Structure probing data (2A3 and DMS) for a 177-nucleotide construct. DMS adducts were read by reverse transcription with MarathonRT.
[RMDB]
RNA sequence: GGGAACGACUCGAGUAGAGUCGAAAAUCAGAUGAGACUAGCCAUCAGACUAGAUAGUAUCACACUACCGGUACAUAGUAGAGACAUACAUAGAUGUGUAUGACACAUCAGAGGCGCGGGCCACCGAGCCAGGUAUGCGAUUCGUCGCAUACCUGGCAAAAGAAACAACAACAACAAC
Reactivity to 2A3 in 0.01 (KOAc 150mM, MgCl2 10mM, bicine 150mM(pH8.5), 24C), signal-to-noise 2, nucleotides 027 to 126: u060c020a020g040a100u050g030a020g020a090c040u030a010g040c030c020a060u060c030a040g080a130c050u040a020g040a090u070a030g040u060a070u080c010a020c010a010c110u130a050c020c050g000g030u070a050c020a020u060a040g040u030a020g020a010g000a110c010a070u080a030c010a010u120a070g110a040u110g060u010g010u030a170u270g120a060c000a000c000a040u020c020a000g040a060g040g000c030g000c050g010g010g030c030c020a070c010c060g020a010
Reactivity to DMS in 0.01 (KOAc 150mM, MgCl2 10mM, bicine 150mM(pH8.5), 24C), signal-to-noise 3, nucleotides 027 to 126: u000c040a150g010a050u010g010a150g000a120c030u000a070g050c040c030a110u010c170a110g020a140c070u010a070g000a080u030a060g030u000a110u010c060a080c120a050c070u000a060c030c030g000g030u000a050c100a070u000a050g010u030a040g000a110g020a110c050a070u010a020c050a070u000a070g010a080u010g010u000g010u010a110u000g000a090c050a040c020a010u010c010a090g010a130g000g030c030g050c050g030g000g010c050c080a060c040c050g000a100